[RMDB]
RNA sequence: GGGAACGACUCGAGUAGAGUCGAAAAUCAUUGACUAUUUAAGCAUUCAUCGAACCUUUCAGUUCGCAUCUUUGUUGCUUCUUCGUCGUAGAAGAAUCUUACGAAUUUGCUGAUUUUUAUGAAGGGACCUGGAGCCAGGUUUCGACCUGGCUCCAGGAAAAGAAACAACAACAACAAC
Reactivity to 2A3 in 0.01 (KOAc 150mM, MgCl2 10mM, bicine 150mM(pH8.5), 24C), signal-to-noise 1, nucleotides 027 to 126: u000c000a110u120u300g300a160c080u180a180u300u140u200a010a100g000c000a040u180u130c000a000u150c140g000a110a160c000c000u000u000u030c000a000g000u000u000c000g030c000a000u000c010u000u000u000g140u110u050g000c120u000u000c000u000u000c000g050u080c140g140u110a040g000a000a000g000a000a000u030c000u000u140a120c060g000a000a000u010u000u000g000c050u080g020a060u000u000u000u000u040a220u040g050a000a000g010g000g040a040
Description
Conditions: 150 mM KOAc, 10 mM MgCl2 and 150 mM bicine (pH 8.5), 24 C. The record gives the reactivity of an RNA of 177 nucleotides to 2A3.